Conditions: 150 mM KOAc, 10 mM MgCl2 and 150 mM bicine (pH 8.5), 24 C. The record gives the reactivity of an RNA of 177 nucleotides to 2A3 and DMS. The DMS profile rests on 1,910 reads.
RNA sequence: GGGAACGACUCGAGUAGAGUCGAAAACCAGCGACUCGUCAGUGGCUAAGCCCAGACUUAUGAGAGAGUGGUUACCUCUCAGCCCCUCCACCUUGGGGUGCCCUAUUCGGAGCACUGCAGUUCCCGACAAUAAAACGUCCUUCGGGACGUUUUAUUGAAAAGAAACAACAACAACAAC
Reactivity to 2A3 in 0.01 (KOAc 150mM, MgCl2 10mM, bicine 150mM(pH8.5), 24C), signal-to-noise 1, nucleotides 027 to 126: c010c020a000g080c070g080a030c010u040c030g070u130c170a040g030u080g170g010c000u040a090a010g020c000c030c060a060g060a210c060u080u100a070u130g000a000g000a000g000a000g030u020g000g010u060u030a010c010c000u030c010u000c010a050g110c020c000c030c000u020c060c060a090c010c030u010u070g010g030g000g010u040g000c000c030c000u150a230u040u150c060g010g010a010g010c030a010c060u150g010c010a010g030u010u000c060c010c010g010a000
Reactivity to DMS in 0.01 (KOAc 150mM, MgCl2 10mM, bicine 150mM(pH8.5), 24C), signal-to-noise 2, nucleotides 027 to 126: c030c010a140g010c040g000a040c020u000c150g010u000c140a050g020u010g010g040c010u010a070a090g020c030c030c070a130g000a140c130u010u000a040u010g010a020g000a010g000a050g010u000g020g000u010u000a150c210c000u000c030u000c010a080g020c060c010c000c000u000c070c050a060c190c140u000u010g000g010g010g000u000g000c000c000c030u000a140u010u020c200g010g010a070g000c020a040c050u000g010c050a100g000u000u000c000c000c000g010a250